[RMDB]
RNA sequence: GGGAACGACUCGAGUAGAGUCGAAAAGCGUCCUGGUUCGCCAGGACGCAAAUAAAUGGUAGACUGAGACCGUCUAACUCAGAUAACCAGAAAUAGACCGAAAAACUGACUUGUUCGCAAGUCAGAACGAGUAUAACAACUUCGGUUGUUAUACUCGAAAAGAAACAACAACAACAAC
Reactivity to 2A3 in 0.01 (KOAc 150mM, MgCl2 10mM, bicine 150mM(pH8.5), 24C), signal-to-noise 3, nucleotides 027 to 126: g000c000g010u000c010c000u010g000g050u030u040c200g040c050c020a010g000g000a000c020g010c000a000a000a000u010a000a030a010u020g020g010u030a010g060a250c000u000g000a010g080a200c050c070g200u060c100u090a180a110c000u010c010a010g000a030u210a050a030c000c000a000g020a000a060a000u070a020g050a010c020c000g050a070a080a020a030a080c000u010g010a000c010u000u010g030u050u100c180g010c070a010a010g000u000c000a010g000a010a000
Reactivity to DMS in 0.01 (KOAc 150mM, MgCl2 10mM, bicine 150mM(pH8.5), 24C), signal-to-noise 3, nucleotides 027 to 126: g030c010g020u010c000c000u000g000g010u000u020c220g000c020c000a000g000g000a000c010g020c010a010a020a020u000a050a090a160u000g010g020u000a060g020a060c000u000g000a020g010a170c120c200g000u000c180u000a100a090c000u000c000a000g010a050u010a040a070c000c010a020g010a080a090a080u000a050g010a300c020c040g010a060a070a090a150a180c020u000g000a020c010u000u000g010u010u010c140g010c000a010a000g000u010c000a000g010a060a080